[RMDB]
RNA sequence: GGGAACGACUCGAGUAGAGUCGAAAACAGCGUGCGCGACGCGUCGCCGACGUUCGUCGCGAGCGCGUUAAAGCGCGGCAGCGUGUCGUAGCGCACGCGCGCGCUCAGCUCGGCGAGCGUGUCGUUACCGUAGGGUCAUCUUCGGAUGACCCUACGGAAAAGAAACAACAACAACAAC
Reactivity to DMS in 0.01 (KOAc 150mM, MgCl2 10mM, bicine 150mM(pH8.5), 24C), signal-to-noise 2, nucleotides 027 to 126: c050a080g030c080g010u000g010c030g020c010g010a040c030g040c010g000u010c020g030c110c080g000a040c080g000u000u000c120g000u000c090g020c020g000a080g000c020g000c010g000u000u000a070a100a220g020c000g000c010g000g020c050a100g040c040g000u000g020u010c060g000u000a080g050c110g020c020a010c010g050c010g020c000g000c000g000c000u000c040a080g000c070u020c060g000g010c060g010a070g020c010g000u000g000u000c010g000u010u010a150
Reactivity to 2A3 in 0.01 (KOAc 150mM, MgCl2 10mM, bicine 150mM(pH8.5), 24C), signal-to-noise 2, nucleotides 027 to 126: c020a000g040c000g090u120g000c070g000c000g040a010c000g000c010g060u010c020g080c120c080g040a070c060g020u070u240c040g030u080c050g000c010g010a010g010c030g010c000g010u010u110a150a050a040g030c010g000c000g080g040c020a070g080c050g060u050g020u060c120g150u180a060g000c060g000c070a000c010g000c000g000c000g000c000g010c000u000c000a010g030c040u040c030g030g000c040g010a060g070c040g000u010g000u020c000g020u030u050a120

Chemical mapping of a 177-nucleotide RNA with DMS and 2A3.
Source: RMDB library OK2TRN, as collected in RNAgym.
DMS adducts were read by reverse transcription with MarathonRT.